[RMDB]
RNA sequence: GGGAACGACUCGAGUAGAGUCGAAAAUUAUUGUGAUUAUAGUUACUAUAAAUUCUUAGAAAACAUAGUGGGGUUUUCUAACACUAAUUUGUGGGGCACUCAUUAAUGUUAUAUAUUUAGUAAUUUACCAUACACCACAUUUCGAUGUGGUGUAUGGAAAAGAAACAACAACAACAAC
Reactivity to 2A3 in 0.01 (KOAc 150mM, MgCl2 10mM, bicine 150mM(pH8.5), 24C), signal-to-noise 1, nucleotides 027 to 126: u070u000a050u000u060g000u000g030a070u050u160a070u130a300g010u050u010a000c020u000a000u050a100a090a000u150u000c000u010u090a110g180a060a070a000a000c020a000u050a050g020u010g000g050g040g010u030u000u140u220c090u190a210a010c010a000c020u090a170a220u170u180u260g010u000g000g000g000g000c010a020c070u020c010a000u000u140a130a050u060g000u060u040a170u020a030u000a000u260u050u050a000g010u000a000a030u010u010u000a060

An RNA of 177 nucleotides, treated with 2A3 and read out base by base. The 2A3 profile rests on 300 reads. Values are in units of 0.01, from 0 to 300, in steps of 10. The reactions ran in a buffer of 150 mM KOAc, 10 mM MgCl2 and 150 mM bicine (pH 8.5), at 24 C. It was measured as part of the RMDB library RFM100.